Chemical mapping of a 177-nucleotide RNA with 2A3 and DMS. 2A3 adducts were read by reverse transcription with SuperScript II with manganese.
RNA sequence: GGGAACGACUCGAGUAGAGUCGAAAAGCAGGAACAUGUGGGCAAUCUCGGGAUGUUCCUCGAGGUAGUCUUCGGUUGUGUGCAGUGGUACUUUCGGCACAGGAAGCAGGCGGCUACUGCGGUGGACCCAUAGCGGUGCAUUCGUGCACCGCUAUGGAAAAGAAACAACAACAACAAC
Reactivity to 2A3 in 0.01 (KOAc 150mM, MgCl2 10mM, bicine 150mM(pH8.5), 24C), signal-to-noise 4, nucleotides 027 to 126: g030c090a010g000g110a090a030c040a060u140g040u100g050g040g000c020a070a030u020c010u040c020g000g000g050a130u180g120u230u100c020c030u030c000g020a020g000g020u020a000g010u030c000u050u030c050g060g010u060u050g050u040g020u050g010c020a040g030u050g080g040u130a150c060u050u100u090c040g070g000c080a050c020a130g060g090a050a070g000c040a030g120g000c020g010g000c010u030a020c020u040g020c010g040g000u060g040g020a020c000
Reactivity to DMS in 0.01 (KOAc 150mM, MgCl2 10mM, bicine 150mM(pH8.5), 24C), signal-to-noise 1, nucleotides 027 to 126: g000c020a110g020g000a030a030c080a050u000g000u010g000g010g000c080a090a040u010c020u010c000g010g090g050a160u030g000u020u030c160c000u000c070g000a000g000g000u000a070g010u000c030u000u010c030g010g000u000u000g010u010g000u000g000c030a100g000u020g000g000u050a070c060u010u010u020c080g000g000c080a070c110a110g020g020a030a020g000c080a080g030g000c140g010g030c060u040a070c040u020g050c030g000g070u000g000g000a090c140

The data come from the RNA Mapping Database (RMDB), library OK1LIB. The 2A3 profile rests on 2,223 reads.